[RMDB]
RNA sequence: GGGAACGACUCGAGUAGAGUCGAAAACUGGGAGGAGUUCACACGGGGCAUCGGCUCUAAGCUUAUGGAGAAAAUGGGUUACAUCCAUGGUACUGGUCUUGGCUCAGAUGGAAGGGGAAUCGUCACACUCCAGGUGACUGUUCGCAGUCACCUGGAGAAAAGAAACAACAACAACAAC
Reactivity to DMS in 0.01 (KOAc 150mM, MgCl2 10mM, bicine 150mM(pH8.5), 24C), signal-to-noise 1, nucleotides 027 to 126: c160u010g000g000g040a150g030g010a120g030u020u010c070a100c100a100c120g000g020g000g000c090a080u030c150g020g000c050u000c050u000a050a060g010c050u000u000a100u010g000g010a090g040a060a120a160a120u000g010g010g000u000u000a090c160a120u000c020c020a060u000g000g000u010a100c060u000g010g030u010c090u000u000g000g030c040u000c100a020g010a090u000g050g010a120a050g010g000g000g010a010a080u020c090g000u010c060a100c300a160
Source: RMDB library OK2TRN, as collected in RNAgym. Chemical mapping of a 177-nucleotide RNA with DMS. The RNA was probed in 150 mM KOAc, 10 mM MgCl2 and 150 mM bicine (pH 8.5) at 24 C.